An RNA of 207 nucleotides, treated with DMS and 2A3 and read out base by base. The DMS profile rests on 5,153 reads. The reactions ran in a buffer of 150 mM KOAc, 10 mM MgCl2 and 150 mM bicine (pH 8.5), at 24 C. Values cover nucleotides 27 to 156.
RNA sequence: GGGAACGACUCGAGUAGAGUCGAAAACGCUGGGACCGAACUACAAACCGAUGUAUGGGAGCUGAAGCGCGCACGGCGAAGAACAUACGCGGUUUGCGGUCCUGUGCUGAAGCGCGCACGGCAACCGAAAGGUGCGAACGCCUGUUUCGACAGGCAAUUAACUGCUAACAUUCGUGUUAGCAGUUAAAAAAGAAACAACAACAACAAC
Reactivity to DMS in 0.01 (KOAc 150mM, MgCl2 10mM, bicine 150mM(pH8.5), 24C), signal-to-noise 2, nucleotides 027 to 156: c030g040c050u010g030g040g020a040c020c020g010a070a150c060u010a280c000a040a020a040c040c010g010a080u000g060u000a010u000g000g000g030a230g040c000u000g010a040a060g000c020g040c020g020c010a300c000g000g010c030g020a070a120g010a080a110c010a020u000a030c000g010c000g020g000u000u010u000g000c000g000g000u000c010c000u000g010u000g010c010u000g000a160a040g020c030g040c050g000c030a210c040g030g010c030a070a170c010c020g000a100a190a160g000g010u000g020c010g010a080a130c110g000c000c000u000g030u000u000u010c290g030a130c000a010g000g040c020a030a030
Reactivity to 2A3 in 0.01 (KOAc 150mM, MgCl2 10mM, bicine 150mM(pH8.5), 24C), signal-to-noise 4, nucleotides 027 to 156: c030g010c010u040g000g000g000a000c010c000g020a090a070c060u200a070c300a030a010a000c010c000g150a220u080g000u010a000u010g050g080g070a070g000c010u040g030a250a030g000c010g000c000g010c000a010c020g000g020c010g140a240a080g090a250a000c000a000u000a000c000g000c010g020g000u000u020u040g010c000g000g000u010c020c000u010g010u020g000c000u040g010a120a050g000c000g000c010g010c010a010c010g020g000c030a060a040c010c000g060a110a050a010g020g010u040g020c000g030a090a020c130g010c010c000u020g020u030u150u070c110g080a010c000a000g000g010c000a000a000